[RMDB]
RNA sequence: GGGAACGACUCGAGUAGAGUCGAAAAAGCUGCUCAGUAUACGUACUGAGCAGCAAGGGGUUGAAGCGGACACCCCUUCAGGCGCGCGCCCAAGCUCCGUACGCCGCCUCAUACGUAAGGCGGCGAAAUAGGUGUAUCUGGUUCGCCAGAUACACAACACUCACUCUAUCUUCGGAUAGAGUGAGUGAAAAGAAACAACAACAACAAC
Reactivity to 2A3 in 0.01 (KOAc 150mM, MgCl2 10mM, bicine 150mM(pH8.5), 24C), signal-to-noise 2, nucleotides 027 to 156: a010g010c000u020g000c010u000c010a000g020u020a080u020a080c230g020u010a010c010u000g000a000g020c000a000g010c010a000a000g020g020g000g030u030u100g180a190a010g000c000g000g000a000c010a000c000c030c000c000u030u080c040a010g000g000c000g020c010g040c030g010c160c000c000a010a030g040c060u030c020c010g010u010a060c000g010c010c000g020c020c000u040c030a160u210a180c080g120u180a030a000g000g000c000g000g000c000g000a000a000a000u060a010g160g010u000g000u000a000u000c000u000g000g030u020u050c100g010c050c000a000g000a000u000a000c000a000c000a000a010